[RMDB]
RNA sequence: GGGAACGACUCGAGUAGAGUCGAAAAUUUCAACCUGCAUGGGUUGGGGCGGCUUAGCGAUUAAGGCGUUGUUUCACCCUAGUGGCCCUUACCCCAUGCAAAGUCUGCAUGCAGGCAGGGUAUUGUGCAUAUCAAAAAACUUCGGUUUUUUGAUAUGAAAAGAAACAACAACAACAAC
Reactivity to 2A3 in 0.01 (KOAc 150mM, MgCl2 10mM, bicine 150mM(pH8.5), 24C), signal-to-noise 2, nucleotides 027 to 126: u080u100u070c040a040a050c000c020u000g000c020a020u020g010g010g000u010u010g030g000g000g020c040g010g000c020u090u170a040g030c050g170a150u190u170a100a060g110g000c040g030u040u050g010u020u100u060c040a080c040c000c000u010a000g040u010g190g020c000c000c000u000u040a020c030c000c000c010a000u010g000c010a020a010a010g020u010c020u030g010c030a050u070g000c030a020g130g050c010a020g080g000g000u150a170u090u280g020u040g060
Reactivity to DMS in 0.01 (KOAc 150mM, MgCl2 10mM, bicine 150mM(pH8.5), 24C), signal-to-noise 4, nucleotides 027 to 126: u000u000u000c050a120a120c040c020u000g000c020a080u000g000g010g030u000u000g000g010g010g010c000g000g010c030u000u010a050g010c120g020a130u000u010a080a070g010g010c060g000u000u000g000u010u010u000c030a130c080c020c040u010a020g020u000g000g010c000c000c000u000u000a050c100c010c020c020a010u000g000c010a020a070a100g010u000c080u010g000c020a070u000g020c130a080g000g010c060a050g010g000g010u010a060u010u010g010u010g020